[RMDB]
An RNA of 177 nucleotides, treated with DMS and 2A3 and read out base by base. 2A3 adducts were read by reverse transcription with SuperScript II with manganese. Reactivities are given for positions 27 through 126.
RNA sequence: GGGAACGACUCGAGUAGAGUCGAAAAAGUACAGCGCGGUGCUCGUUGCUAUUCACGAGCAGUCGCCCGAGAUUGCCAGCGGGGUGGACCACUCCGAGGAAUGGCGCGAGAUGAGCGAAGCCGAGCGUCCAGCUCCAGCAUUCGUGCUGGAGCUGGAAAAAGAAACAACAACAACAAC
Reactivity to DMS in 0.01 (KOAc 150mM, MgCl2 10mM, bicine 150mM(pH8.5), 24C), signal-to-noise 1, nucleotides 027 to 126: a100g040u060a060c210a090g000c080g000c000g000g000u000g000c020u000c000g020u000u060g030c030u050a000u000u010c000a120c170g000a060g000c000a020g000u000c000g000c120c010c080g030a040g000a010u020u020g000c040c000a300g020c000g000g000g140g000u000g000g010a190c150c070a150c000u000c000c030g030a120g000g000a100a000u000g030g020c010g010c060g000a070g000a120u030g040a130g010c170g030a130a130g040c000c000g020a060g000c060g000
Reactivity to 2A3 in 0.01 (KOAc 150mM, MgCl2 10mM, bicine 150mM(pH8.5), 24C), signal-to-noise 2, nucleotides 027 to 126: a030g290u170a120c050a040g000c000g000c010g030g000u020g010c010u000c000g010u150u300g000c020u030a000u030u000c030a020c020g010a030g000c000a010g010u030c030g000c010c010c000g080a040g000a030u040u140g010c000c030a010g020c020g000g010g000g050u090g030g020a030c040c050a030c020u000c000c000g010a050g000g100a000a000u000g000g000c010g000c000g030a030g010a060u290g020a080g090c070g020a010a000g050c030c010g020a020g030c020g030